[RMDB]
RNA sequence: GGGAACGACUCGAGUAGAGUCGAAAAGAUAUGGAUACCCGGGAGAUUGCGAAGGACUCGGAAACGAGUCCGAAGUAUAAUCUUUGAUCGUGGUAUCCUAAGUCAAAUCGCCCGUUCGCGGGCGAAAGAUAUGAAACGUGUUCGCACGUUUCAUAUCAAAAGAAACAACAACAACAAC
Reactivity to DMS in 0.01 (KOAc 150mM, MgCl2 10mM, bicine 150mM(pH8.5), 24C), signal-to-noise 4, nucleotides 027 to 126: g010a040u010a250u000g000g010a020u000a010c010c000c020g000g010g000a010g000a010u000u000g000c010g010a270a300g010g000a010c000u010c000g020g010a060a070a170c000g010a020g000u010c000c000g000a020a230g010u000a040u010a040a020u000c000u000u000u020g000a050u030c010g000u010g040g010u000a000u000c000c000u000a020a080g010u000c010a050a120a190u000c010g010c010c000c000g010u000u010c240g020c010g020g000g020c000g000a000a020a050
Reactivity to 2A3 in 0.01 (KOAc 150mM, MgCl2 10mM, bicine 150mM(pH8.5), 24C), signal-to-noise 2, nucleotides 027 to 126: g000a000u070a040u070g010g010a000u000a000c020c000c000g000g010g010a020g000a000u050u110g020c030g030a160a060g010g010a000c010u000c000g050g000a040a040a030c000g020a000g000u010c000c000g000a000a000g000u030a030u050a070a000u010c000u170u110u070g180a210u190c040g070u240g060g010u020a010u010c000c000u010a070a000g000u020c020a000a040a270u030c010g010c030c030c000g020u030u080c300g010c020g040g000g000c020g010a020a020a010